[RMDB]
RNA sequence: GGGAACGACUCGAGUAGAGUCGAAAAGUCCAAAAUUGAUUCGGCGGCCCUGUCAUGAGGCCGAAACGAAGGCACGUACCCCUUCGAAUGGCGUCGGGGAGUCAGAGGCUAUAUAUGCGCCUAAUGCUAAAGUCGUGCUGGUUCGCCAGCACGACAAGACAUACUAGCCGUUCGCGGCUAGUAUGUCAAAAGAAACAACAACAACAAC
Reactivity to 2A3 in 0.01 (KOAc 150mM, MgCl2 10mM, bicine 150mM(pH8.5), 24C), signal-to-noise 1, nucleotides 027 to 156: g040u100c000c000a000a060a070a100u140u150g010a050u030u030c010g070g000c030g000g020c000c000c050u060g110u090c100a220u190g050a040g000g050c030c000g050a000a000a000c000g000a020a000g020g000c250a040c150g040u210a100c010c010c010c010u000u010c030g080a080a150u170g040g010c030g110u060c030g030g010g020g030a050g010u010c090a050g040a060g010g000c040u000a000u000a000u000a010u300g090c050g000c010c020u020a050a050u050g000c030u160a200a090a000g000u000c000g000u000g000c010u000g000g050u020u000c070g020c020c040a000g000c000a000c000g000a000c000a000a000
The record gives the reactivity of an RNA of 207 nucleotides to 2A3.
For 2A3, 488 sequencing reads were counted.
As a SHAPE reagent, 2A3 marks flexible, mostly unpaired nucleotides at the ribose 2'-OH.